[RMDB]
RNA sequence: GGGAACGACUCGAGUAGAGUCGAAAACACCAUUGUCAAGACCGAGCUGGUGGAGCUCACCGAGUACCUGGUGGUGCACCUCAAGGAGCUGCUGGUGACCAACGUCCUGUAUGAGAUGAACAGCACACAUUAACUCCCCUUUCGAGGGGAGUUAAUGAAAAGAAACAACAACAACAAC
Reactivity to DMS in 0.01 (KOAc 150mM, MgCl2 10mM, bicine 150mM(pH8.5), 24C), signal-to-noise 4, nucleotides 027 to 126: c100a150c050c020a080u010u000g010u000c100a110a070g000a180c070c050g010a110g010c060u000g020g030u010g020g000a120g020c030u010c010a050c050c040g010a110g020u010a050c170c090u000g020g010u010g000g000u000g000c020a080c060c020u000c060a070a140g010g010a100g030c050u010g000c030u010g010g000u000g000a150c050c040a070a100c110g000u000c020c010u000g000u020a080u010g010a070g010a110u000g000a040a100c060a060g020c210a060c270a160
Reactivity to 2A3 in 0.01 (KOAc 150mM, MgCl2 10mM, bicine 150mM(pH8.5), 24C), signal-to-noise 2, nucleotides 027 to 126: c040a020c030c030a080u050u200g130u070c070a010a090g000a160c050c020g010a030g080c050u050g010g070u070g060g000a010g030c010u020c070a060c040c040g040a060g010u100a090c000c070u100g000g040u040g030g030u070g030c000a040c000c010u020c070a080a100g030g020a120g070c020u080g010c020u040g040g020u030g050a050c000c030a010a040c060g000u060c010c000u020g040u050a090u180g120a110g020a190u150g020a070a020c010a020g010c020a000c010a000

The data come from the RNA Mapping Database (RMDB), library OK2TRN. This 177-nucleotide RNA was probed chemically with DMS and 2A3. The reactions ran in a buffer of 150 mM KOAc, 10 mM MgCl2 and 150 mM bicine (pH 8.5), at 24 C. For DMS the reverse transcriptase was MarathonRT. For 2A3, 1,358 sequencing reads were counted. For 2A3 the reverse transcriptase was SuperScript II with manganese.